[RMDB]
RNA sequence: GGGAACGACUCGAGUAGAGUCGAAAAAGACUGAGACAGAACAUACUUUAUGCUGGGGCUUGCAACGUUGGGUGCUUUUCUACUGGUAACCUUCCCAGAAUAAAAUCCACUGAGGUCCACCUUGCCACAACCAUAAGCGUUUCGACGCUUAUGGUUGAAAAGAAACAACAACAACAAC
Reactivity to DMS in 0.01 (KOAc 150mM, MgCl2 10mM, bicine 150mM(pH8.5), 24C), signal-to-noise 1, nucleotides 027 to 126: a060g000a120c040u000g000a070g000a020c100a050g020a150a060c120a060u000a060c060u000u000u010a080u050g000c000u000g010g000g020g020c080u010u000g000c090a040a060c100g000u000u000g010g020g030u000g000c060u010u000u010u010c100u000a090c120u000g000g010u000a100a130c040c030u000u000c030c000c000a160g020a080a030u010a090a040a070a080u000c020c090a040c080u000g000a060g000g000u000c040c040a070c040c020u010u000g050c080c060a120